The record gives the reactivity of an RNA of 177 nucleotides to 2A3 and DMS. Conditions: 150 mM KOAc, 10 mM MgCl2 and 150 mM bicine (pH 8.5), 24 C. DMS adducts were read by reverse transcription with MarathonRT.
RNA sequence: GGGAACGACUCGAGUAGAGUCGAAAAGUAAGACACAUUUGGGUGCCCUGCCAUGCCUGUCAUCCAGAAGUUCUUUCUGGCACUGACUCGUGGGGCUUUGCGUUCGCAACGCAUGCUCUGUGGAGUGAGUGACCUGAAUUUUCGAAUUCAGGUCACUAAAAGAAACAACAACAACAAC
Reactivity to 2A3 in 0.01 (KOAc 150mM, MgCl2 10mM, bicine 150mM(pH8.5), 24C), signal-to-noise 4, nucleotides 027 to 126: g060u060a040a030g090a030c030a020c030a130u080u110u140g070g000g000u050g030c030c000c000u010g000c020c020a070u100g000c000c010u030g000u030c000a090u230c000c010a000g020a040a030g040u240u100c020u030u100u000c000u000g020g000c010a060c040u030g010a010c000u010c000g020u040g010g020g000g000c020u070u040u020g010c010g000u020u090c080g020c120a040a000c000g000c010a000u040g020c020u020c010u040g050u070g070g020a060g050u090g040
Reactivity to DMS in 0.01 (KOAc 150mM, MgCl2 10mM, bicine 150mM(pH8.5), 24C), signal-to-noise 3, nucleotides 027 to 126: g010u000a040a020g010a070c130a040c040a120u000u010u020g000g010g020u000g000c030c020c000u000g000c040c090a060u010g000c030c020u000g000u000c010a040u010c040c010a010g010a040a020g010u000u010c070u010u000u000c000u000g000g020c120a060c050u010g010a010c020u010c050g010u020g010g020g000g000c010u010u020u000g020c020g000u000u000c300g000c200a170a070c030g020c010a010u000g000c010u010c010u000g000u010g030g010a080g000u010g000